[RMDB]
RNA sequence: GGGAACGACUCGAGUAGAGUCGAAAAGAACCACAUGUACAACAAUCUUUAGAGGCUGCUAAAGAAGAUAUUAUUAAAUCUACAUCUAUGCCUAUUAGUACACCGAGUGGCACACCUUCCGAUAUAAUCACACUUAGGCUUUCGAGCCUAAGUGUGAAAAAGAAACAACAACAACAAC
Reactivity to 2A3 in 0.01 (KOAc 150mM, MgCl2 10mM, bicine 150mM(pH8.5), 24C), signal-to-noise 4, nucleotides 027 to 126: g040a020a010c010c000a010c010a050u170g050u110a040c000a050a020c030a030a180u060c060u050u130u060a070g040a020g120g020c010u070g020c050u160a110a000a020g030a070a000g030a040u050a080u180u200a100u090u170a100a160a110u020c010u040a060c040a090u060c060u080a100u080g010c000c000u060a120u170u130a070g010u020a000c000a040c010c090g020a010g050u050g020g040c030a020c000a020c040c060u100u010c010c040g020a010u020a030u060a110a070
Reactivity to DMS in 0.01 (KOAc 150mM, MgCl2 10mM, bicine 150mM(pH8.5), 24C), signal-to-noise 1, nucleotides 027 to 126: g000a150a190c090c010a050c170a110u080g020u000a110c030a060a100c280a110a300u050c140u000u000u020a000g000a120g000g010c020u000g000c010u090a000a220a040g030a030a070g000a040u000a060u030u090a120u010u020a030a040a000u000c050u030a030c060a090u030c100u000a070u000g000c000c000u000a030u000u030a020g020u000a090c000a080c090c100g000a200g000u000g000g000c120a000c090a040c000c030u000u000c020c010g000a100u000a040u020a160a300